[RMDB]
RNA sequence: GGGAACGACUCGAGUAGAGUCGAAAAGCUCUGUAAUGGGAUGGGAUCCGAAGCCCCAUUGAGGGAUAAUACAGGCUCUCCCAUCCAACUCCUAUUCCAACACGUCCUCGUCGUACAGGGUGGUAACUAAGGUAUAGCUCCUUCGGGAGCUAUACAACGUACUCAAAGAGUUCGCUCUUUGAGUACGAAAAGAAACAACAACAACAAC
Reactivity to DMS in 0.01 (KOAc 150mM, MgCl2 10mM, bicine 150mM(pH8.5), 24C), signal-to-noise 1, nucleotides 027 to 156: g060c020u000c030u010g000u000a030a120u020g020g030g010a040u030g000g000g030a090u010c010c030g020a230a190g030c010c010c000c010a300u010u000g000a190g040g030g000a130u010a050a080u000a080c120a300g000g030c060u030c060u010c010c000c000a030u010c020c010a070a040c020u000c010c010u000a110u000u010c000c030a110a110c070a090c020g030u000c030c010u000c030g010u000c080g030u010a040c070a090g050g000g010u010g010g000u010a090a130c030u030a080a160g010g010u010a010u000a020g040c000u000c000c000u000u000c300g010g000g000a000g030c000u010a000u000a010c000a040a060
Reactivity to 2A3 in 0.01 (KOAc 150mM, MgCl2 10mM, bicine 150mM(pH8.5), 24C), signal-to-noise 2, nucleotides 027 to 156: g020c030u000c030u060g090u100a130a140u120g070g000g010a000u000g000g000g010a030u120c020c020g040a040a010g030c000c000c030c010a070u150u170g030a260g000g000g000a020u080a250a040u160a270c110a080g000g010c000u000c000u000c030c020c010a010u020c000c000a000a010c020u000c000c030u060a110u110u040c030c020a060a010c090a030c080g090u040c020c010u050c020g090u050c020g020u030a020c040a040g000g010g000u020g000g030u070a100a050c080u090a140a030g100g000u000a000u000a010g020c000u020c010c000u020u010c080g140g000g000a000g030c000u000a000u000a000c000a000a000